[RMDB]
RNA sequence: GGGAACGACUCGAGUAGAGUCGAAAAGAUCGGACGUACGCGUCCGAUCAAGAAGCUGCGUGAGCAGCUUCAACAUCCGGUAUCCCAAGACAAUCUUCGGGUUGGGUUGGGAAGUAUCAUGGCUAAUCACCAUGAUGCAAUCGGGUUGAACACUUAAUUGGGUUAAAACGGUGGGGGACGAUCCCGUAACAUCCGUCCUAACGGCGACAGACUGCACGGCCCUGCCUCUUAGGUGUGUCCAAUGAACAGUCGUUCCGAAAGGAAGUAGCCUACGCUUCGGCGUAGGCAAAAGAAACAACAACAACAAC
Reactivity to DMS in 0.01 (KOAc 150mM, MgCl2 10mM, bicine 150mM(pH8.5), 24C), signal-to-noise 2, nucleotides 027 to 266: g010a010u000c000g000g000a000c000g040u020a090c190g030c010g000u000c010c000g000a000u000c010a030a060g030a030a000g000c000u000g000c050g000u010g000a260g010c000a000g040c010u000u010c010a100a250c120a060u010c020c020g040g010u000a220u030c000c000c000a030a020g000a050c020a010a050u000c020u010u020c210g030g050g040u000u000g020g000g040u010u000g000g000g010a030a120g010u050a020u000c000a000u000g010g000c000u000a140a040u010c300a300c000c000a000u000g000a000u000g010c030a270a040u020c020g010g000g010u000u000g000a080a020c090a000c050u000u000a080a100u010u000g000g010g010u000u000a090a060a110a130c080g000g010u000g000g000g000g000g000a080c100g000a110u010c030c000c050g000u000a050a090c180a070u000c040c020g000u000c000c040u000a080a180c080g010g020c130g000a030c100a060g010a070c020u000g000c160a040c200g000g010c040c000c050u000g030c020c000u000c120u000u010a020g000g000u010g000u010g000u010c040c090a060a080u000g030a120a160c110a020g000u000c000g000u000u010c020c000g020a050a110a070g000g000a040a110g010u000a170
Reactivity to 2A3 in 0.01 (KOAc 150mM, MgCl2 10mM, bicine 150mM(pH8.5), 24C), signal-to-noise 2, nucleotides 027 to 266: g010a000u000c000g000g010a010c000g020u140a030c300g010c010g100u000c000c000g000a000u000c000a000a000g010a000a000g000c000u000g000c010g050u090g050a050g010c000a000g000c000u000u000c000a000a010c000a040u020c010c000g010g040u070a100u030c010c000c000a010a000g090a020c040a020a050u090c040u240u140c200g140g020g100u070u060g130g220g270u010u070g020g000g020a010a020g020u050a000u000c000a000u000g000g000c020u030a040a000u040c020a000c010c000a010u000g000a000u000g000c010a040a030u120c010g000g000g000u000u090g030a100a010c020a000c070u030u090a070a020u130u060g050g010g020u080u150a030a100a090a000c030g050g030u090g020g030g000g020g000a030c050g050a040u050c000c020c000g010u000a010a000c030a140u100c060c020g080u010c000c010u040a100a010c030g020g020c030g070a000c020a090g040a000c030u010g060c040a020c020g030g030c010c000c000u010g020c000c030u080c100u090u210a080g060g020u020g010u010g030u050c000c000a120a120u090g030a100a020c000a040g010u000c030g000u010u000c000c020g020a040a000a000g120g030a050a010g090u140a000
Structure probing data (DMS and 2A3) for a 307-nucleotide construct. Reactivities are rounded to 0.1 and cut off at 0 and 3. Values cover nucleotides 27 to 266.